[RMDB]
RNA sequence: GGGAACGACUCGAGUAGAGUCGAAAAGAUAUGGAGAUGUAGAGUGGGUCAACAGCGUUGAUCGGAAACGAUCAACGACAUGACCGCUACUGUCUCCUAAGUCAAAAGUGGCCGUUCGCGGCCACAACAAUAGAACCUGCUUCGGCAGGUUCUAUUGAAAAGAAACAACAACAACAAC
Reactivity to 2A3 in 0.01 (KOAc 150mM, MgCl2 10mM, bicine 150mM(pH8.5), 24C), signal-to-noise 3, nucleotides 027 to 126: g000a000u070a040u180g020g000a010g030a020u040g050u300a060g030a100g150u300g170g220g000u000c040a120a090c060a280g090c000g010u000u000g010a000u000c000g010g000a080a090a040c010g000a000u000c000a000a000c000g030a050c000a030u130g000a020c020c020g020c000u040a050c040u060g020u020c010u000c000c000u020a140a000g040u030c040a030a050a150a100g000u030g000g040c080c030g060u070u120c300g000c030g110g010c060c000a000c000a000a010
Reactivity to DMS in 0.01 (KOAc 150mM, MgCl2 10mM, bicine 150mM(pH8.5), 24C), signal-to-noise 3, nucleotides 027 to 126: g020a040u000a300u010g010g000a030g030a010u000g000u000a020g010a170g010u020g020g010g000u000c000a040a140c300a160g000c000g000u000u010g010a010u000c000g000g000a140a090a180c030g010a010u000c000a000a000c000g020a040c090a200u000g010a030c010c000g020c000u000a000c000u000g020u010c000u000c000c000u020a040a120g000u010c030a090a050a130a170g020u000g010g020c000c000g010u000u040c250g000c020g000g020c010c000a010c000a020a070